Structure probing data (2A3 and DMS) for a 177-nucleotide construct.
[RMDB]
RNA sequence: GGGAACGACUCGAGUAGAGUCGAAAAGAUAUGGAUUGAACUACCUCUAUACAUUCGUUGAAAUCGGAAACGAUGGAGAAUGUAAAUGAGGCAAUCCUAAGUCAAAACGACGCCUUCGGGCGUCGAACUCGCAUUCUAAGUUCGCUUAGAAUGCGAGAAAAGAAACAACAACAACAAC
Reactivity to 2A3 in 0.01 (KOAc 150mM, MgCl2 10mM, bicine 150mM(pH8.5), 24C), signal-to-noise 2, nucleotides 027 to 126: g010a020u070a050u200g050g000a020u030u020g030a140a080c050u110a110c290c020u040c000u010a040u000a070c000a030u000u050c020g230u230u040g000a060a080a010u030c000g000g060a120a030a030c030g010a010u000g000g000a030g010a030a010u000g000u030a010a030a070u200g000a020g000g030c010a010a000u000c000c000u020a180a030g090u000c010a000a000a040a150c020g000a000c000g040c000c000u060u110c300g140g010g000c000g010u010c000g000a000a000
Reactivity to DMS in 0.01 (KOAc 150mM, MgCl2 10mM, bicine 150mM(pH8.5), 24C), signal-to-noise 2, nucleotides 027 to 126: g010a010u010a300u010g000g000a010u000u000g000a090a080c100u020a300c010c010u000c000u000a300u000a000c000a000u000u010c000g030u000u010g000a130a060a010u000c000g000g000a170a040a290c010g020a010u000g000g020a020g010a000a000u000g010u000a000a110a050u020g000a030g000g000c000a000a000u000c000c010u010a030a200g020u010c020a030a100a110a300c000g020a020c000g010c000c000u000u000c120g070g010g000c010g020u000c000g000a010a060

The data come from the RNA Mapping Database (RMDB), library TTRDEL.
The 2A3 profile rests on 2,699 reads.
Values cover nucleotides 27 to 126.
DMS adducts were read by reverse transcription with MarathonRT.
The RNA was probed in 150 mM KOAc, 10 mM MgCl2 and 150 mM bicine (pH 8.5) at 24 C.
For DMS, 1,217 sequencing reads were counted.